[RMDB]
RNA sequence: GGGAACGACUCGAGUAGAGUCGAAAAAUGGGAACCUGGAACUCGAAAAAAGUGACUAGUUUGACUUAACUUGCUCUUAGUGAAUCUAUUCUUACUUCUUGUCCAUCUACAAUUUCAAAGUACAUCUGAUGCUUGAAACAAGACUAGAGUUAGGGGCCCACACACUCAUCUUCGGAUGAGUGUGUGGAAAAGAAACAACAACAACAAC
Reactivity to 2A3 in 0.01 (KOAc 150mM, MgCl2 10mM, bicine 150mM(pH8.5), 24C), signal-to-noise 1, nucleotides 027 to 156: a000u050g000g010g000a010a020c010c010u010g050g020a020a030c000u010c050g020a120a000a000a000a000a000g020u030g030a020c020u020a040g020u020u030u020g070a030c040u050u010a040a000c000u010u060g000c010u000c010u010u010a010g000u020g150a080a030u300c010u300a010u300u000c010u050u030a080c080u030u010c000u060u000g070u050c030c020a050u080c030u100a150c080a140a260u070u140u060c120a180a140a030g050u040a070c050a180u120c100u110g060a060u050g010c000u000u040g010a050a040a000c060a120a040g010a020c040u050a030g000a000g030u010u030a000g000g000g010g000c000